[RMDB]
RNA sequence: GGGAACGACUCGAGUAGAGUCGAAAACUCCACGCUGGGUAAUGGACGACGGCGGCGUGUGGCGAACAGGGAUACCGGUAGUCAGUGUCUGGAACAUCCGAAGGGGCGGCGGAGCUAGCACCCCGACAAAACGGGCACAAGUUCGCUUGUGCCCGAACUACAUACAAGUCUUCGGACUUGUAUGUAGAAAAGAAACAACAACAACAAC
Reactivity to 2A3 in 0.01 (KOAc 150mM, MgCl2 10mM, bicine 150mM(pH8.5), 24C), signal-to-noise 2, nucleotides 027 to 156: c020u030c010c010a030c020g020c020u030g030g010g030u140a140a090u090g050g030a010c030g010a010c010g050g050c020g010g010c020g020u060g010u020g040g000c050g010a070a100c070a110g000g030g010a010u060a100c030c040g020g020u050a040g040u070c060a010g020u010g030u070c010u040g000g050a080a050c030a090u030c020c020g020a130a030g000g000g030g000c010g020g010c010g010g060a020g030c010u020a030g000c010a050c000c000c000c000g020a000c040a000a110a030a020c020g010g000g000c000a000c000a000a010g010u030u080c180g020c070u000u000g000u000g000c000c000c000g000a000a000
Reactivity to DMS in 0.01 (KOAc 150mM, MgCl2 10mM, bicine 150mM(pH8.5), 24C), signal-to-noise 2, nucleotides 027 to 156: c030u000c010c000a050c100g010c020u020g010g030g040u000a080a040u010g030g020a080c030g000a050c020g050g010c110g010g050c060g020u000g000u000g000g030c010g000a060a130c040a110g000g040g010a130u010a050c060c000g000g040u000a070g020u010c040a040g010u000g010u010c030u020g020g000a080a120c040a140u000c010c010g000a130a170g030g000g030g020c030g000g000c090g010g010a100g040c020u000a130g020c020a090c020c000c010c010g010a090c080a020a040a070a090c020g010g010g030c000a020c040a020a040g000u000u010c300g010c010u010u000g020u010g000c000c010c000g030a010a020
Structure probing data (2A3 and DMS) for a 207-nucleotide construct. The RNA was probed in 150 mM KOAc, 10 mM MgCl2 and 150 mM bicine (pH 8.5) at 24 C.